[RMDB]
RNA sequence: GGGAACGACUCGAGUAGAGUCGAAAACGAAUAUUAAAUGAUGGAUACUUCAACAAGAUGCAAACUUCUUAUAAUCCAGAACUGAUUGCUACAUUAGCAUGGAUUGAGAUCAAGUUAGGCCUAUCCGUCAACGAAUCUUCUUCGGAAGAUUCGUUGAAAAAGAAACAACAACAACAAC
Reactivity to 2A3 in 0.01 (KOAc 150mM, MgCl2 10mM, bicine 150mM(pH8.5), 24C), signal-to-noise 1, nucleotides 027 to 126: c000g040a050a050u170a110u300u270a140a140a040u130g010a020u080g020g030a000u040a030c030u040u110c020a130a080c040a040a150g030a030u080g000c000a030a070a070c000u000u000c000u020u180a180u090a210a020u010c030c000a000g070a050a050c040u030g090a070u030u090g080c030u100a060c030a190u090u050a010g030c020a070u000g000g000a000u000u040g020a100g000a060u090c030a030a030g060u000u030a000g000g070c020c020u010a030u000c000c030g010
Reactivity to DMS in 0.01 (KOAc 150mM, MgCl2 10mM, bicine 150mM(pH8.5), 24C), signal-to-noise 1, nucleotides 027 to 126: c090g020a170a150u000a120u020u020a050a070a180u000g010a050u000g000g010a020u000a100c080u000u010c050a130a150c110a130a150g000a080u000g000c030a170a010a080c090u000u010c010u010u000a060u000a060a020u000c000c000a030g030a120a240c030u000g000a000u000u000g040c210u010a050c220a060u000u000a000g000c040a170u000g020g010a000u000u000g000a080g030a030u000c110a000a060g030u000u000a040g010g010c010c140u010a030u000c020c020g000

Chemical mapping of a 177-nucleotide RNA with 2A3 and DMS. It was measured as part of the RMDB library OK2TRN. The 2A3 profile rests on 685 reads. For DMS, 771 sequencing reads were counted. Reactivities are rounded to 0.1 and cut off at 0 and 3.